[RMDB]
RNA sequence: GGGAACGACUCGAGUAGAGUCGAAAAUGCCUGUUCCUGGGCUGCAAAGACCUUACCUGUCACAUAUGCUCUCAGAACCCCAACCGGCAGUGCAGCGUCAACUUCAACAACAAGUAUCUGGCAGGCGUAAUAUUUCCUAGUUCGCUAGGAAAUAUUAAAAAGAAACAACAACAACAAC
Reactivity to 2A3 in 0.01 (KOAc 150mM, MgCl2 10mM, bicine 150mM(pH8.5), 24C), signal-to-noise 4, nucleotides 027 to 126: u070g030c010c010u020g030u070u060c010c020u040g000g080g000c020u030g020c050a080a070a070g050a130c000c010u030u070a040c020c010u050g020u060c020a020c020a070u160a070u160g020c020u000c000u010c040a070g060a240a190c000c010c000c010a020a070c020c000g050g000c020a020g040u040g050c020a010g020c010g090u040c020a030a050c030u110u070c040a110a100c010a020a020c010a120a000g020u020a080u080c020u030g020g000c000a010g000g020c010g010
Reactivity to DMS in 0.01 (KOAc 150mM, MgCl2 10mM, bicine 150mM(pH8.5), 24C), signal-to-noise 9, nucleotides 027 to 126: u010g010c000c010u000g010u000u000c020c000u000g010g010g010c020u000g010c080a050a110a100g010a100c070c050u010u000a090c060c040u010g000u000c030a070c120a070u000a140u010g010c030u000c050u000c080a080g000a090a150c050c010c010c030a080a110c100c060g000g000c050a050g010u000g010c030a030g000c040g000u000c060a060a060c060u000u000c070a060a060c120a060a060c120a040a080g010u000a070u010c080u000g000g010c030a030g010g010c110g010